[RMDB]
RNA sequence: GGGAACGACUCGAGUAGAGUCGAAAACGCAAGCCAGAACACGGCGCUACAGACGUUCUAUAAACUGGUUGACCGCAAGCGCAAUGACGAUUACAAGCCGCUGUUAGAAUUCCUGUUACAGUUCAUCGUAACGGAGGAGGAAUACAGCGUCGAGUUCAUAAUGCACAACGUUCGCGUUGUGCAUUAUAAAAGAAACAACAACAACAAC
Reactivity to DMS in 0.01 (KOAc 150mM, MgCl2 10mM, bicine 150mM(pH8.5), 24C), signal-to-noise 2, nucleotides 027 to 156: c060g010c050a100a140g020c000c020a100g010a100a060c040a170c040g020g020c000g010c010u000a160c060a080g010a150c070g030u000u000c040u000a200u000a040a100a100c020u010g000g100u000u000g010a080c030c020g020c010a060a160g020c020g010c010a110a090u000g020a120c040g020a160u010u010a110c070a060a170g000c110c010g010c010u020g030u000u000a110g010a180a240u000u000c000c000u030g010u010u000a040c010a140g040u000u020c240a100u020c080g040u000a020a030c010g030g010a140g010g000a040g020g010a210a200u020a040c000a010g020c020g020u010c040g000a220g000u020u010c080
Reactivity to 2A3 in 0.01 (KOAc 150mM, MgCl2 10mM, bicine 150mM(pH8.5), 24C), signal-to-noise 3, nucleotides 027 to 156: c050g030c070a030a020g000c000c020a010g050a090a020c060a010c110g000g000c020g030c000u110a050c040a090g110a070c010g020u140u070c100u050a120u090a140a140a020c010u030g020g000u060u090g070a080c030c040g030c090a090a090g040c060g000c050a080a040u120g050a060c050g090a100u070u230a090c030a030a060g020c000c000g020c000u000g010u040u050a070g150a050a030u040u000c000c000u050g020u000u000a010c020a040g050u090u260c090a210u220c200g010u010a000a000c030g040g040a120g020g010a000g010g030a050a030u030a060c000a000g000c000g030u030c020g010a010g000u060u030c020

Structure probing data (DMS and 2A3) for a 207-nucleotide construct. The data come from the RNA Mapping Database (RMDB), library OK3TST. The RNA was probed in 150 mM KOAc, 10 mM MgCl2 and 150 mM bicine (pH 8.5) at 24 C. For 2A3, 1,257 sequencing reads were counted. Values are in units of 0.01, from 0 to 300, in steps of 10.